[RMDB]
RNA sequence: GGGAACGACUCGAGUAGAGUCGAAAAGGUAAUUCCUACGAUUAAGAAACCUGUUUACAGAAGGAUCCCCACCUAUGGGCGGGUUAUCAGAUAUUAUCAGGUGGGAAAUUCGGUGGAACACAGUGGAGCCUUGUCCUCCGGGUUAAUGUCGCUUUUGCAUGUGUAUUUACUUCGGUAAAUACACAUGAAAAGAAACAACAACAACAAC
Reactivity to DMS in 0.01 (KOAc 150mM, MgCl2 10mM, bicine 150mM(pH8.5), 24C), signal-to-noise 1, nucleotides 027 to 156: g010g000u020a070a140u000u010c000c010u000a160c120g020a170u010u010a110a090g010a260a230a040c030c020u000g000u000u000u000a140c100a130g020a120a150g000g000a090u000c130c010c000c000a050c040c100u000a100u000g040g010g040c020g010g010g000u000u000a030u000c070a210g000a160u010a050u000u000a080u000c040a040g040g040u000g010g030g030a090a010a100u000u000c040g020g040u000g020g000a060a020c050a040c070a110g020u010g020g000a130g020c040c050u000u000g010u000c000c020u000c000c010g000g020g010u000u000a040a120u000g020u000c040g010c060u010u000u010u000g000
Reactivity to 2A3 in 0.01 (KOAc 150mM, MgCl2 10mM, bicine 150mM(pH8.5), 24C), signal-to-noise 2, nucleotides 027 to 156: g140g010u080a070a000u120u050c010c000u030a100c020g080a100u120u160a200a100g020a070a080a020c020c010u040g030u040u070u100a120c060a010g140a080a050g050g040a130u080c000c010c000c000a020c010c030u040a070u080g050g050g000c050g000g000g000u070u050a080u070c000a020g040a080u070a070u220u040a030u100c030a000g050g030u010g010g000g020a020a030a020u050u030c060g000g020u050g030g010a100a000c070a010c010a130g050u120g080g080a030g090c030c000u030u030g030u000c010c010u000c000c000g000g010g040u040u100a100a100u130g050u070c030g030c020u110u120u010u250g190